[RMDB]
RNA sequence: GGGAACGACUCGAGUAGAGUCGAAAACAUCCAACCUCCAAGGAUGGUAAUCCGGCGUCGAUUGUAAGGUCUAAACAAUUGACGCACCACUACUACAGUCCCAACGACUGAGGGACUCGUCGACUCGGUUAAGAUCGGAAACCGGGUCGAGGUAUAGGUCAAGUACCCUGUUCGCAGGGUACUUGACAAAAGAAACAACAACAACAAC
Reactivity to 2A3 in 0.01 (KOAc 150mM, MgCl2 10mM, bicine 150mM(pH8.5), 24C), signal-to-noise 3, nucleotides 027 to 156: c000a000u030c000c000a030a110c050c070u150c050c020a090a040g000g000a010u030g000g040u120a070a100u060c010c020g030g000c000g000u000c000g000a010u010u000g000u030a140a140g150g140u070c090u150a180a110a000c010a000a000u000u000g000a000c000g000c000a020c010c010a070c030u230a030c000u060a040c010a040g010u000c000c030c010a100a050c110g230a080c050u150g000a110g030g000g000a000c000u000c030g140u000c000g000a000c010u000c000g000g040u020u060a140a070g100a210u140c070g050g070a160a020a000c000c000g010g000g020u010c020g010a000g000g010u090a120u160a140g060

An RNA of 207 nucleotides, treated with 2A3 and read out base by base. It was measured as part of the RMDB library PDB130.